[RMDB]
RNA sequence: GGGAACGACUCGAGUAGAGUCGAAAAAUCACGCUCGAACGGAUAUUGCGGAUCGUUGUCGAAGAUCGCCGAGGCGCGCCGGAUCGCCUGCGGGCCGAAGCGUGCGCCGGGCCGGUUGGAAACGGCACUAGGUAGGUGCAUUCGUGCACCUACCUAGAAAAGAAACAACAACAACAAC
Reactivity to DMS in 0.01 (KOAc 150mM, MgCl2 10mM, bicine 150mM(pH8.5), 24C), signal-to-noise 3, nucleotides 027 to 126: a070u010c050a080c100g020c040u000c090g020a090a050c100g010g000a120u020a050u010u010g000c030g000g010a070u010c060g000u000u010g030u010c040g030a210a090g010a050u000c030g020c030c030g020a260g010g010c010g020c030g000c010c030g010g010a190u010c260g010c030c000u020g020c100g040g020g020c020c030g010a100a110g010c080g010u000g000c070g020c010c000g000g010g000c060c040g010g010u010u000g010g000a100a060a050c030g010g000c040a180
Reactivity to 2A3 in 0.01 (KOAc 150mM, MgCl2 10mM, bicine 150mM(pH8.5), 24C), signal-to-noise 1, nucleotides 027 to 126: a010u030c020a030c080g020c020u010c050g080a110a030c080g050g040a080u110a040u140u080g010c050g070g000a050u040c020g010u070u110g160u000c020g020a030a040g000a100u030c000g000c020c010g030a110g050g050c020g020c000g010c020c030g020g010a090u080c070g080c070c030u060g000c080g070g000g010c060c000g000a010a010g030c000g040u050g000c060g000c020c000g000g050g000c060c050g030g000u000u060g060g000a090a070a000c000g000g040c020a030